[RMDB]
RNA sequence: GGGAACGACUCGAGUAGAGUCGAAAACAUCGAAGCGGCGCACGGCGUCCCGUGCGGUCAGCCUGGGCGGCCAGCCGAUCGAGGCGGGUCAGAAGGUUGUGGUGUGGGAGGGCUCGGCCAACCGUGAAUACCCUCAUUAAUUCGUUAAUGAGGGUAUAAAAGAAACAACAACAACAAC
Reactivity to DMS in 0.01 (KOAc 150mM, MgCl2 10mM, bicine 150mM(pH8.5), 24C), signal-to-noise 9, nucleotides 027 to 126: c090a110u010c090g010a110a200g010c030g010g000c030g010c050a060c060g020g010c220g010u010c100c000c000g040u000g020c020g010g010u010c060a070g010c030c010u000g010g010g020c150g010g000c000c020a060g020c010c010g000a100u010c190g000a130g010g020c030g010g010g010u000c030a080g010a150a070g010g000u000u000g020u010g010g010u000g010u000g000g000g010a100g000g010g010c030u000c070g010g010c030c040a070a080c030c030g010u000g000a110
Reactivity to 2A3 in 0.01 (KOAc 150mM, MgCl2 10mM, bicine 150mM(pH8.5), 24C), signal-to-noise 5, nucleotides 027 to 126: c030a080u110c080g040a120a020g060c020g020g010c020g000c060a070c080g040g020c040g110u060c000c110c000g020u040g010c050g050g130u080c020a000g000c010c010u050g010g080g040c050g020g020c000c010a010g000c000c010g040a050u170c080g020a060g030g000c010g010g020g010u030c020a050g050a150a030g090g000u070u070g060u110g030g050u110g020u110g060g000g020a120g020g040g000c040u060c060g020g000c010c020a020a020c020c010g020u020g030a000